[RMDB]
Conditions: 150 mM KOAc, 10 mM MgCl2 and 150 mM bicine (pH 8.5), 24 C.
An RNA of 207 nucleotides, treated with DMS and 2A3 and read out base by base.
DMS adducts were read by reverse transcription with MarathonRT.
For 2A3 the reverse transcriptase was SuperScript II with manganese.

RNA sequence: GGGAACGACUCGAGUAGAGUCGAAAAUCCUAAGUCCAAUCUAAGCAGAAUCUUGGAUUUAUACAGGGAGGCUCGGAAACGAGCCUUUGAUCUGUAUUGUCAGAUUCUGAACGCGAUUGGAUAUGGAAAAAGCGUGUACUGUUCGCAGUACACGCAAUCUAAGUGAUACGUUCGCGUAUCACUUAGAAAAAGAAACAACAACAACAAC
Reactivity to DMS in 0.01 (KOAc 150mM, MgCl2 10mM, bicine 150mM(pH8.5), 24C), signal-to-noise 2, nucleotides 027 to 156: u000c020c000u000a060a200g010u000c000c000a020a030u010c010u000a250a160g020c000a060g000a020a010u000c010u010u000g020g000a040u000u000u000a040u000a060c010a030g020g000g020a030g020g040c030u010c000g010g000a150a160a250c000g030a010g010c000c000u000u010u020g000a040u000c000u000g000u000a020u000u000g010u010c020a050g000a040u000u000c010u000g010a030a080c020g000c230g000a010u010u000g020g020a020u000a080u000g020g000a060a090a090a160a100g010c000g030u000g020u000a010c000u000g000u000u000c300g020c020a010g020u010a000c000a000c000g000c000a000a000
Reactivity to 2A3 in 0.01 (KOAc 150mM, MgCl2 10mM, bicine 150mM(pH8.5), 24C), signal-to-noise 3, nucleotides 027 to 156: u030c010c000u020a060a010g010u000c000c000a000a000u020c000u060a040a050g040c000a000g000a020a010u020c010u200u300g070g010a030u080u300u060a010u010a000c000a010g000g020g000a010g000g000c010u000c000g020g050a030a110a090c020g000a000g000c050c000u050u030u010g000a000u000c000u000g010u000a000u000u010g020u010c010a000g000a010u000u000c000u000g000a040a050c050g000c030g030a000u010u000g000g000a000u020a030u040g000g070a010a070a030a090a040g000c000g010u000g010u010a010c000u010g040u050u140c300g000c140a000g000u000a000c000a000c000g020c000a000a000
The 2A3 profile rests on 3,877 reads. Reactivities are given for positions 27 through 156.